Conditions: 150 mM KOAc, 10 mM MgCl2 and 150 mM bicine (pH 8.5), 24 C. This 177-nucleotide RNA was probed chemically with 2A3 and DMS. It was measured as part of the RMDB library OK1LIB. The DMS profile rests on 1,352 reads. 2A3 adducts were read by reverse transcription with SuperScript II with manganese.
RNA sequence: GGGAACGACUCGAGUAGAGUCGAAAAUUAAAACAAGAUGCGAAUGAUAUUGGCUUUGCUAAAUUACUACAAAAUGAGAAUAAUCGUAUGAGUUAUAACGAGUUAAUGAGUGAAUGGCAAUCACAUCCCUUACGGGAGACUUCGGUCUCCCGUAAGGAAAAGAAACAACAACAACAAC
Reactivity to 2A3 in 0.01 (KOAc 150mM, MgCl2 10mM, bicine 150mM(pH8.5), 24C), signal-to-noise 2, nucleotides 027 to 126: u080u030a000a000a040a020c020a000a050g050a030u060g090c110g060a140a110u110g040a050u050a090u060u040g060g010c000u160u040u080g000c040u000a050a120a130u110u040a060c040u030a030c030a000a120a020a000u130g030a040g050a220a070u220a050a090u040c000g050u100a130u180g090a120g070u070u080a080u100a140a020c160g000a000g040u000u150a060a040u080g050a000g060u000g030a090a100u070g040g000c000a000a030u050c000a000c020a190u160c020
Reactivity to DMS in 0.01 (KOAc 150mM, MgCl2 10mM, bicine 150mM(pH8.5), 24C), signal-to-noise 1, nucleotides 027 to 126: u000u060a080a060a230a070c160a060a070g030a020u000g020c030g000a090a080u000g020a000u150a130u000u020g000g020c040u020u000u000g010c040u000a060a050a070u000u010a040c070u000a040c100a000a090a130a060u050g040a080g000a100a000u000a050a020u000c020g050u030a040u040g050a130g000u000u000a030u000a020a090c130g000a120g010u030u000a050a080u050g000a000g010u020g000a000a010u040g030g000c060a000a020u040c050a000c060a160u050c070